[RMDB]
Record summary: An RNA of 177 nucleotides, treated with 2A3 and DMS and read out base by base. For 2A3, 4,333 sequencing reads were counted. Reactivities are given for positions 27 through 126. It was measured as part of the RMDB library OK2TRN. In probing experiments dimethyl sulfate is read out at A N1 and C N3, which are open when not base-paired.

RNA sequence: GGGAACGACUCGAGUAGAGUCGAAAAGAAGCAUUGUCACAAGCUAAACAUGCUUGCUCACUCAUAACUGGCUUUUUUUUAAAACUCUCCAGUGGUGGAUCAGUCUCAAACUUGCAAUAGGGAUUAGCAGUAUCUUUGUUUUCGAACAAAGAUACUGAAAAGAAACAACAACAACAAC
Reactivity to 2A3 in 0.01 (KOAc 150mM, MgCl2 10mM, bicine 150mM(pH8.5), 24C), signal-to-noise 4, nucleotides 027 to 126: g080a030a000g000c020a070u030u230g050u120c030a020c010a100a030g000c050u080a110a160a020c030a070u150g000c000u010u020g030c010u020c030a050c010u110c020a090u080a240a040c030u030g030g000c000u130u020u020u020u010u000u030u160a120a150a040a030c020u040c010u000c040c020a030g010u040g020g040u030g010g030a070u060c020a020g060u020c000u000c030a080a120a090c030u020u100g000c020a040a110u040a150g060g020g030a080u100u110a020g010
Reactivity to DMS in 0.01 (KOAc 150mM, MgCl2 10mM, bicine 150mM(pH8.5), 24C), signal-to-noise 6, nucleotides 027 to 126: g000a050a040g020c010a090u000u010g020u000c140a140c050a050a050g000c040u010a100a100a110c270a070u000g000c020u000u010g000c070u000c100a090c090u010c090a060u010a100a080c150u010g010g000c060u010u000u010u010u020u010u010u000a050a060a110a100c110u000c040u000c020c050a050g010u000g020g030u000g000g000a070u000c060a050g000u000c010u010c030a030a050a070c080u010u000g000c070a050a080u000a060g010g010g010a210u000u000a080g020